[RMDB]
RNA sequence: GGGAACGACUCGAGUAGAGUCGAAAAACGCAGUGGCAUAAAAAUAUUCGCUGCUAAUUAAAUGUCGGGCCUAAUCAAUUAUGAACUCAACCCCCAUUCCGCUGGCCAGCGAGUGGGAAAAACUGCGCGUCAUGAUAUAGUUCGCUAUAUCAUGACGAAAAGAAACAACAACAACAAC
Reactivity to DMS in 0.01 (KOAc 150mM, MgCl2 10mM, bicine 150mM(pH8.5), 24C), signal-to-noise 2, nucleotides 027 to 126: a170c100g020c020a010g040u000g010g040c200a040u060a010a040a100a080a170u000a070u000u010c040g020c000u000g000c060u000a010a050u000u000a050a030a120u000g020u010c080g000g010g000c020c000u000a050a070u000c170a010a110u000u000a050u040g000a060a090c030u010c110a040a160c110c030c000c020c020a090u010u000c100c020g020c050u000g000g000c190c060a100g010c000g000a040g110u020g000g050g010a040a030a050a080a070c030u000g000c090g000
Reactivity to 2A3 in 0.01 (KOAc 150mM, MgCl2 10mM, bicine 150mM(pH8.5), 24C), signal-to-noise 8, nucleotides 027 to 126: a000c020g000c010a000g010u030g070g050c090a040u170a100a150a040a040a020u170a130u070u110c030g000c020u020g000c000u020a050a030u080u140a080a080a080u160g050u110c030g010g030g020c000c020u110a070a070u070c060a040a070u170u120a130u300g070a060a020c030u030c090a040a090c030c020c000c000c010a000u030u020c070c030g000c020u030g060g130c030c020a000g000c000g000a000g020u020g000g000g000a040a000a000a020a030c040u070g000c050g000

Structure probing data (DMS and 2A3) for a 177-nucleotide construct. Values cover nucleotides 27 to 126. The RNA was probed in 150 mM KOAc, 10 mM MgCl2 and 150 mM bicine (pH 8.5) at 24 C. For DMS, 3,112 sequencing reads were counted.